[RMDB]
RNA sequence: GGGAACGACUCGAGUAGAGUCGAAAAUGGUGGUUCGCCACCAAAAAAGGGGUCGCUGUAGACGCUUUGAUCGACGAACUACUUCUGAAGCCUCCACGGAAGCGUCGGGAGCGUCCGAAGGCGACGGAGGCACCCAAAAAACACCUUUCGAGGUGAAGUUGGAAAGGUUAUUCGUAACCUUUCCAACAAAAGAAACAACAACAACAAC
Reactivity to 2A3 in 0.01 (KOAc 150mM, MgCl2 10mM, bicine 150mM(pH8.5), 24C), signal-to-noise 4, nucleotides 027 to 156: u070g000g000u000g000g010u080u080c200g040c010c030a050c020c040a130a060a000a000a000a060g110g000g010g000u030c030g030c070u150g120u200a030g010a010c000g000c010u300u220u050g040a030u030c010g030a000c000g010a090a140c080u130a070c020u270u010c010u010g030a040a020g020c000c010u000c000c010a030c020g010g000a010a000g010c000g010u000c000g000g010g010a020g000c000g000u000c000c010g010a040a070g050g010c010g000a000c010g000g000a000g000g000c000a030c010c010c000a060a080a000a040a000a010c040a020c070c010u120u110u100c230g120a030g000g010u030g050a120a030
Reactivity to DMS in 0.01 (KOAc 150mM, MgCl2 10mM, bicine 150mM(pH8.5), 24C), signal-to-noise 1, nucleotides 027 to 156: u000g020g020u010g000g030u000u010c280g030c080c000a020c010c010a000a020a050a070a070a060g040g000g020g020u000c000g020c010u000g060u000a140g030a120c000g040c010u000u000u010g040a230u010c020g020a040c010g010a140a120c080u010a300c020u010u000c010u000g010a040a190g000c010c000u000c010c000a300c090g030g010a060a010g020c010g020u000c020g070g000g010a090g000c030g000u000c010c020g040a120a190g000g000c020g020a020c020g000g010a010g040g040c020a080c010c000c010a020a060a040a060a090a150c000a000c040c000u000u000u010c280g040a090g010g020u010g000a030a070